[RMDB]
RNA sequence: GGGAACGACUCGAGUAGAGUCGAAAAAUGGUGGAUCGUCGGGAUUGGAGUCAUCUGCCAUCAUGGUCAGAGAGGAGAGGUGGAGAGAGCCUUGACAUAGCUGCCGCCCGUCGCCUGCUGGAAUGACUGCAUAAGAUACGUUCGCGUAUCUUAUGCAAAAAGAAACAACAACAACAAC
Reactivity to 2A3 in 0.01 (KOAc 150mM, MgCl2 10mM, bicine 150mM(pH8.5), 24C), signal-to-noise 7, nucleotides 027 to 126: a000u100g010g010u010g030g020a060u080c060g020u020c030g050g040g050a120u100u220g050g030a050g030u050c030a050u000c060u010g020c020c000a060u120c070a070u270g020g020u160c030a000g030a000g010a040g090g040a050g000a010g000g040u090g080g060a130g010a020g010a010g090c020c000u040u060g030a050c020a060u190a040g000c020u120g090c010c000g010c000c010c010g010u030c010g010c000c010u050g000c020u030g030g050a110a100u120g050a050c050
Reactivity to DMS in 0.01 (KOAc 150mM, MgCl2 10mM, bicine 150mM(pH8.5), 24C), signal-to-noise 4, nucleotides 027 to 126: a060u010g000g020u000g000g000a030u020c070g030u030c030g000g000g000a130u020u030g030g000a100g000u000c080a080u010c020u030g010c020c000a100u030c130a080u050g010g020u050c030a020g000a070g000a120g000g000a260g000a080g000g000u000g000g020a100g000a110g010a110g010c050c030u000u000g030a220c120a050u020a110g000c030u000g000c030c030g020c030c000c000g000u010c060g010c130c020u010g000c030u000g000g010a070a050u010g010a130c130